[RMDB]
RNA sequence: GGGAACGACUCGAGUAGAGUCGAAAACUUCCCGAUUCCGUCCAUCCCUCCCCCCCAAGGGUCGCCCAGGAAUGGCGGGACCCCACUCAACUGGGGUCCGCGUUCCAUCCUUUCUUACCUGAUGGCCCAUUAAUAAGUAGUUCGCUACUUAUUAAUGAAAAGAAACAACAACAACAAC
Reactivity to 2A3 in 0.01 (KOAc 150mM, MgCl2 10mM, bicine 150mM(pH8.5), 24C), signal-to-noise 2, nucleotides 027 to 126: c010u030u000c030c000c010g010a040u110u050c040c020g060u020c040c020a130u060c030c000c010u000c010c000c000c000c000c000c000a010a010g030g000g010u040c030g040c020c010c010a020g030g070a070a020u060g300g200c070g020g050g010a020c030c010c010c000a010c020u210c040a070a280c030u030g000g000g000g000u000c000c010g060c000g010u030u000c010c000a030u050c010c000u050u140u100c040u030u070a100c000c030u070g040a070u120g090g030c020c010
Reactivity to DMS in 0.01 (KOAc 150mM, MgCl2 10mM, bicine 150mM(pH8.5), 24C), signal-to-noise 9, nucleotides 027 to 126: c300u000u000c000c000c000g000a140u010u000c060c030g010u000c020c030a080u010c010c010c010u000c000c000c000c000c000c010c020a090a100g000g000g010u000c020g010c040c030c050a110g010g010a050a020u000g010g020c010g010g020g010a020c000c000c000c000a020c050u000c300a100a120c180u000g010g010g000g010u000c000c000g000c020g010u000u000c010c000a100u000c050c040u000u000u010c070u010u000a120c070c050u000g010a100u010g010g010c040c060
This 177-nucleotide RNA was probed chemically with 2A3 and DMS.
Source: RMDB library VIROID, as collected in RNAgym.
The reactions ran in a buffer of 150 mM KOAc, 10 mM MgCl2 and 150 mM bicine (pH 8.5), at 24 C.
2A3 adducts were read by reverse transcription with SuperScript II with manganese.